[RMDB]
RNA sequence: GGGAACGACUCGAGUAGAGUCGAAAAGCCUCAGGCAGUCUGAGAGGCCAGUAGUCUACUUCUGUAAAAGUCCUUUCACACUGAGUCAAGAUCUACCUCCUUGUGACUUCCUCUCACUGACUCUGGGACUAAGCUUAUGCUUCGGCAUAAGCUUAGUAAAAGAAACAACAACAACAAC
Reactivity to 2A3 in 0.01 (KOAc 150mM, MgCl2 10mM, bicine 150mM(pH8.5), 24C), signal-to-noise 2, nucleotides 027 to 126: g040c000c000u040c020a010g040g010c030a020g010u050c040u060g030a020g000a010g010g030c010c000a030g050u070a010g020u020c080u150a230c010u170u000c020u030g040u010a010a060a110a100g040u060c000c000u030u060u040c030a020c010a000c040u030g040a010g050u030c060a070a030g000a160u060c020u110a070c010c000u020c020c000u000u050g030u030g040a030c020u050u000c010c010u000c000u000c000a010c030u050g040a070c000u010c000u150g010g000g020
Reactivity to DMS in 0.01 (KOAc 150mM, MgCl2 10mM, bicine 150mM(pH8.5), 24C), signal-to-noise 3, nucleotides 027 to 126: g010c090c010u020c050a040g000g010c040a050g000u010c160u010g010a030g000a010g020g020c230c030a030g010u000a030g010u010c100u010a090c020u000u000c040u000g020u010a030a050a130a100g010u010c060c080u000u010u010c030a030c050a050c070u000g000a060g010u000c100a100a070g010a110u010c080u000a100c100c020u000c030c020u000u020g010u000g010a060c130u000u000c020c010u000c040u000c000a080c030u000g010a050c020u000c040u010g000g000g000